[RMDB]
RNA sequence: GGGAACGACUCGAGUAGAGUCGAAAAGAAAGAAACAGUUGGCUAGCUGAACGCACGAGGAUUAAAGCCAACCGUGCGAGUCGGAACGCACGACCGACAAGAAAAGCCCUACAAUCGUGCAAGAAAACAGCAUCCUAGUAUUCGUACUAGGAUGCUGAAAAGAAACAACAACAACAAC
Reactivity to DMS in 0.01 (KOAc 150mM, MgCl2 10mM, bicine 150mM(pH8.5), 24C), signal-to-noise 4, nucleotides 027 to 126: g010a120a120a100g020a110a060a040c050a070g000u000u010g020g050c040u000a140g000c070u000g000a140a150c110g020c030a010c030g020a070g000g010a180u010u040a040a110a110g010c000c010a040a080c120c000g020u000g010c070g020a230g000u000c000g000g000a090a040c120g040c010a020c020g000a100c020c000g000a020c030a160a190g000a010a030a100a110g000c040c020c150u020a070c210a050a040u010c000g010u030g000c020a070a060g000a070a050a100a120
An RNA of 177 nucleotides, treated with DMS and read out base by base. The reactions ran in a buffer of 150 mM KOAc, 10 mM MgCl2 and 150 mM bicine (pH 8.5), at 24 C.